[RMDB]
RNA sequence: GGGAACGACUCGAGUAGAGUCGAAAAGACUAUCCGUAUACCAUCAUCAGCCUGGUCCUUCUCUGGGACGACAUUGACCCGGAAGCUGCUCUGCGACCCAUGCUUGAGCGCCUGGAGCUGGCCGCAACAUUAUUAGGCUAUUCGUAGCCUAAUAAUGAAAAGAAACAACAACAACAAC
Reactivity to DMS in 0.01 (KOAc 150mM, MgCl2 10mM, bicine 150mM(pH8.5), 24C), signal-to-noise 9, nucleotides 027 to 126: g010a120c080u000a070u000c040c030g010u000a090u000a110c050c030a050u000c070a070u000c070a070g010c030c040u000g010g010u000c030c030u000u000c090u010c080u010g010g000g000a090c040g000a080c120a090u010u010g010a080c050c020c030g000g000a080a110g010c070u000g000c030u000c040u000g000c040g000a100c040c030c050a080u000g010c050u000u000g000a080g020c060g010c040c070u000g000g010a070g010c040u000g000g010c030c030g010c110a070a180
Reactivity to 2A3 in 0.01 (KOAc 150mM, MgCl2 10mM, bicine 150mM(pH8.5), 24C), signal-to-noise 9, nucleotides 027 to 126: g050a030c050u070a070u110c030c020g050u090a080u050a140c020c030a040u090c010a030u030c030a030g040c010c010u080g040g040u050c010c000u090u110c060u000c020u060g030g020g030a050c040g040a040c060a140u060u190g090a090c010c010c000g020g020a030a020g030c060u080g000c010u030c020u050g010c010g040a090c020c010c020a050u120g020c020u110u110g030a050g050c040g010c020c030u050g040g020a040g020c020u020g040g000c020c010g020c020a050a070
This 177-nucleotide RNA was probed chemically with DMS and 2A3. The DMS profile rests on 25,606 reads. DMS adducts were read by reverse transcription with MarathonRT.